[RMDB]
RNA sequence: GGGAACGACUCGAGUAGAGUCGAAAAUUAAUUUGACAAAAGAAGAAUACGUAUCCAUUCAGUACUCCAGAGGGACUUGAAAACUGUUCUUCCCUGAACUAACGCUGGACUAUCAUGGGAUGUGAAGCUAUCGUCUUUACUUCGGUAAAGACGAUAGAAAAGAAACAACAACAACAAC
Reactivity to DMS in 0.01 (KOAc 150mM, MgCl2 10mM, bicine 150mM(pH8.5), 24C), signal-to-noise 6, nucleotides 027 to 126: u030u040a060a110u020u020u010g010a090c110a060a040a060a070g010a080a090g000a090a050u020a050c120g010u000a080u010c020c030a080u020u000c070a100g010u000a050c170u000c030c030a060g000a060g020g010g010a060c120u020u010g000a060a070a090a100c130u010g010u010u000c020u010u010c020c020c010u010g010a060a030c110u000a070a060c140g000c020u000g000g000a030c090u000a040u000c080a060u020g010g000g020a050u010g000u010g010a090a100g010
Reactivity to 2A3 in 0.01 (KOAc 150mM, MgCl2 10mM, bicine 150mM(pH8.5), 24C), signal-to-noise 7, nucleotides 027 to 126: u080u050a020a090u070u040u210g090a050c080a030a130a020a020g120a110a010g030a100a030u100a080c040g040u080a070u020c010c010a000u040u080c020a010g050u040a070c050u000c010c020a010g010a060g060g040g030a030c040u100u100g080a050a030a050a070c070u100g040u040u000c000u030u030c000c000c020u020g060a060a040c020u020a120a000c040g010c030u020g000g010a040c020u050a050u130c040a090u080g070g000g020a000u040g030u060g040a020a030g020

Chemical mapping of a 177-nucleotide RNA with DMS and 2A3.
For 2A3 the reverse transcriptase was SuperScript II with manganese.
The RNA was probed in 150 mM KOAc, 10 mM MgCl2 and 150 mM bicine (pH 8.5) at 24 C.